Chemical mapping of a 177-nucleotide RNA with 2A3. It was measured as part of the RMDB library OK1LIB. As a SHAPE reagent, 2A3 marks flexible, mostly unpaired nucleotides at the ribose 2'-OH. Reactivities are given for positions 27 through 126. Conditions: 150 mM KOAc, 10 mM MgCl2 and 150 mM bicine (pH 8.5), 24 C. For 2A3, 679 sequencing reads were counted. Reactivities are rounded to 0.1 and cut off at 0 and 3.
[RMDB]
RNA sequence: GGGAACGACUCGAGUAGAGUCGAAAAGAGCUGAAGUACAGCAAGAACGACGCAAUCCUUGGCAAAGCGUCGAAGAUAAGCGUGCCGAGUGCCAAGGAUUAACGGCACGCGAGGCGAAGACGCCAGAGCCAUACUGCCCGUUCGCGGGCAGUAUGGCAAAAGAAACAACAACAACAAC
Reactivity to 2A3 in 0.01 (KOAc 150mM, MgCl2 10mM, bicine 150mM(pH8.5), 24C), signal-to-noise 1, nucleotides 027 to 126: g100a050g110c000u010g000a130a000g060u020a100c000a000g050c090a030a030g060a040a000c050g010a000c000g000c070a080a000u070c000c050u130u030g000g040c000a060a170a150g000c000g000u000c000g010a000a060g050a000u190a000a180g040c000g000u000g070c000c000g000a060g070u060g000c000c000a000a020g010g000a000u110u050a110a210c000g010g020c000a000c000g120c030g000a010g000g000c060g080a180a060g100a060c030g000c000c000a050g000a000